[RMDB]
RNA sequence: GGGAACGACUCGAGUAGAGUCGAAAAGUGAAUUGGAUGAUGUGUCGUCAAUGACAUCUCUCCCUGUCUGGGGUAAUCCAAGAGACUCUAGUAGUAAGAUGUGUCGAUUCUUCAGACGAGGUAGAUGCUCAAAGCAGUUUUUCGAAACUGCUUUGAGAAAAGAAACAACAACAACAAC
Reactivity to DMS in 0.01 (KOAc 150mM, MgCl2 10mM, bicine 150mM(pH8.5), 24C), signal-to-noise 4, nucleotides 027 to 126: g010u010g000a110a130u010u000g010g010a040u010g010a080u010g020u000g010u000c040g020u000c210a100a090u000g010a140c020a010u000c080u000c050u000c020c000c020u000g020u010c020u000g010g010g000g000u010a040a010u000c010c140a100a230g020a110g000a020c020u000c000u000a110g010u010a070g030u000a080a040g010a060u000g010u020g000u000c130g000a070u000u000c000u000u000c030a030g000a040c000g000a030g000g010u000a040g010a050u000g010
Reactivity to 2A3 in 0.01 (KOAc 150mM, MgCl2 10mM, bicine 150mM(pH8.5), 24C), signal-to-noise 3, nucleotides 027 to 126: g130u100g040a100a080u170u070g040g070a040u090g010a020u050g080u040g040u080c050g040u090c100a090a090u160g000a030c010a020u010c000u000c010u020c000c000c010u030g000u000c010u020g010g010g000g000u120a020a010u020c030c030a050a030g060a000g020a040c010u020c020u040a090g090u030a010g020u050a200a040g040a090u220g050u030g050u080c010g020a050u020u000c000u000u000c000a010g010a020c030g070a010g040g000u050a020g010a090u070g020
Structure probing data (DMS and 2A3) for a 177-nucleotide construct. The reactions ran in a buffer of 150 mM KOAc, 10 mM MgCl2 and 150 mM bicine (pH 8.5), at 24 C. It was measured as part of the RMDB library OK2TST. For 2A3 the reverse transcriptase was SuperScript II with manganese.